[RMDB]
RNA sequence: GGGAACGACUCGAGUAGAGUCGAAAAUCGGACGGCGGCCACGAGUCGCAACGCAAAGCCGCGGCAAGUGGAGUUAGCGAGAAGAGACUAGGCUUUGGUUUCUUCAAGUGAAGCGGUCACCAAUCAGAAUAGCUUGCGCAGUUCGCUGCGCAAGCAAGUCAAUCAGUACUUUCGAGUACUGAUUGACAAAAGAAACAACAACAACAAC
Reactivity to 2A3 in 0.01 (KOAc 150mM, MgCl2 10mM, bicine 150mM(pH8.5), 24C), signal-to-noise 4, nucleotides 027 to 156: u130c020g020g020a020c040g150g000c000g050g030c000c000a020c030g010a020g010u000c000g000c020a040a040c040g060c130a200a190a050g040c090c080g010c010g010g010c010a020a040g010u010g020g030a060g060u100u110a020g010c000g000a020g010a000a000g020a000g010a000c010u050a040g140g180c080u190u200u200g010g000u000u030u010c000u000u000c010a030a000g040u030g040a110a030g020c040g040g020u030c020a030c060c020a030a080u180c040a000g120a170a140u150a050g000c000u000u020g000c000g000c010a010g000u060u070c170g060c120u000g000c000g000c000a000a000g000c000a000a000
Reactivity to DMS in 0.01 (KOAc 150mM, MgCl2 10mM, bicine 150mM(pH8.5), 24C), signal-to-noise 1, nucleotides 027 to 156: u000c100g000g000a080c050g020g040c070g020g000c010c000a010c000g000a300g030u000c020g010c010a010a000c040g000c000a230a150a300g000c010c000g000c010g020g000c030a010a230g000u000g010g000a180g000u000u000a270g020c000g000a300g000a000a020g010a080g000a040c020u000a150g000g000c240u000u000u010g030g010u000u000u010c020u000u000c000a050a300g010u010g000a140a070g010c000g010g000u000c010a040c000c000a020a200u000c050a130g000a180a110u010a150g000c070u000u000g010c000g000c000a050g040u000u000c220g020c000u010g020c010g000c000a000a000g030c010a010a010